Chemical mapping of a 177-nucleotide RNA with 2A3 and DMS. It was measured as part of the RMDB library M2PK50.
[RMDB]
RNA sequence: GGGAACGACUCGAGUAGAGUCGAAAAUUCGCGUGAUUCGUCACGCGAAGAUUACCGAGAACCGUGCUCGGUAUAAACAUGGAACCCUUGCAAACAAGGGAAAUAGGCAGGCCUUCGGGCCUGCCAAACGCAACUAAUAGUUCGCUAUUAGUUGCGUAAAAGAAACAACAACAACAAC
Reactivity to 2A3 in 0.01 (KOAc 150mM, MgCl2 10mM, bicine 150mM(pH8.5), 24C), signal-to-noise 1, nucleotides 027 to 126: u020u000c010g020c010g000u000g050a020u040u090c200g060u000c150a010c000g020c000g010a000a010g000a010u040u070a000c030c000g020a010g010a040a040c070c020g030u070g060c000u010c000g030g120u010a010u020a000a000a010c000a050u060g120g080a040a040c010c000c020u000u010g050c160a180a270a290c000a040a040g040g000g000a020a060a000u080a040g010g010c010a000g000g000c010c030u110u160c280g070g030g000c080c010u010g010c000c000a000a000
Reactivity to DMS in 0.01 (KOAc 150mM, MgCl2 10mM, bicine 150mM(pH8.5), 24C), signal-to-noise 2, nucleotides 027 to 126: u000u000c000g060c000g030u010g000a020u000u010c230g040u000c010a020c010g020c000g000a000a020g010a140u010u000a080c000c010g000a020g000a140a160c090c100g000u020g020c000u000c000g000g000u000a010u000a030a080a110c210a080u000g010g000a170a120c000c000c000u010u010g010c300a080a100a220c030a000a000g000g000g000a010a020a090u000a120g030g010c030a000g000g040c000c000u020u020c190g010g010g010c000c020u010g020c010c000a000a040
Conditions: 150 mM KOAc, 10 mM MgCl2 and 150 mM bicine (pH 8.5), 24 C. For 2A3, 989 sequencing reads were counted. The DMS profile rests on 1,394 reads.